Background:
The record gives the reactivity of an RNA of 207 nucleotides to 2A3. Reactivities are given for positions 27 through 156. For 2A3 the reverse transcriptase was SuperScript II with manganese. The 2A3 profile rests on 744 reads.
RNA sequence: GGGAACGACUCGAGUAGAGUCGAAAACCUCACUACAUUUUACUGUUCCUAAAGAAUUUGUGACAGGUACAGUAAAACGUAUUGCAAGGUUUAUCAGUUCCUAUUAACAGGUAAAUAACAAUAUAUGAAAAGCAAAGACUGUUCGCAGUCUUUGCAAGAUCUCACUCAGGUUCGCCUGAGUGAGAUCAAAAGAAACAACAACAACAAC
Reactivity to 2A3 in 0.01 (KOAc 150mM, MgCl2 10mM, bicine 150mM(pH8.5), 24C), signal-to-noise 2, nucleotides 027 to 156: c000c000u020c010a000c020u010a000c010a040u010u000u000u000a000c000u000g010u130u120c010c000u040a060a200a040g070a270a260u170u210u300g130u140g040a090c090a060g000g010u020a000c000a000g000u030a010a010a010a010c000g000u000a000u040u010g060c070a060a080g020g010u020u040u020a160u100c010a020g000u010u000c000c000u010a110u080u080a060a030c060a020g060g080u150a030a090a080u260a130a030c030a130a010u180a020u140a130u190g090a100a110a000a020g000c000a000a000a000g000a000c000u000g000u050u160c240g000c080a000g000u000c000u000u000u010g000c010a000a000